[RMDB]
RNA sequence: GGGAACGACUCGAGUAGAGUCGAAAAGUCAUGGUGUACCACGUACACGCACAUAUGCGGUGUACCAACGCACUGACAUGCUGCGCAAUACGUUGACUACGUAAUCACGGCGUCGCGUGGUACAUUGCAAUUAGCCAACGUGCAUUAUAGCACAUUACUUACCCAACGGGUUCGCCCGUUGGGUAAGAAAAGAAACAACAACAACAAC
Reactivity to 2A3 in 0.01 (KOAc 150mM, MgCl2 10mM, bicine 150mM(pH8.5), 24C), signal-to-noise 6, nucleotides 027 to 156: g150u110c080a130u140g040g020u020g010u020a040c030c070a130c220g010u060a030c040a000c040g060c060a050c020a080u270a060u110g000c020g020g010u000g000u020a060c020c030a130a110c060g000c010a040c090u110g050a050c030a050u200g020c020u030g000c040g010c060a070a110u030a050c010g010u070u120g130a080c080u070a030c210g050u040a100a060u180c060a020c070g060g010c010g010u030c020g000c010g000u000g000g000u010a000c000a000u000u030g020c000a030a120u130u060a120g050c030c020a040a070c090g010u000g020c000a040u140u130a140u270a140g020c010a020c000a000u080u090a080
Reactivity to DMS in 0.01 (KOAc 150mM, MgCl2 10mM, bicine 150mM(pH8.5), 24C), signal-to-noise 1, nucleotides 027 to 156: g000u020c000a120u000g000g000u000g010u010a040c040c030a050c090g010u000a050c030a000c020g000c050a090c110a120u050a160u000g050c000g000g010u000g040u000a160c050c070a050a100c020g010c010a040c130u000g010a080c010a150u010g070c120u000g020c000g000c110a040a080u010a040c060g000u000u000g010a150c060u010a040c000g000u000a000a140u000c030a070c030g010g030c010g000u020c060g000c000g000u010g000g000u020a020c010a020u000u000g010c040a030a140u000u000a110g020c070c010a070a020c020g000u000g030c020a090u000u000a060u000a100g000c000a030c020a110u000u000a150
Chemical mapping of a 207-nucleotide RNA with 2A3 and DMS. The RNA was probed in 150 mM KOAc, 10 mM MgCl2 and 150 mM bicine (pH 8.5) at 24 C. For DMS the reverse transcriptase was MarathonRT.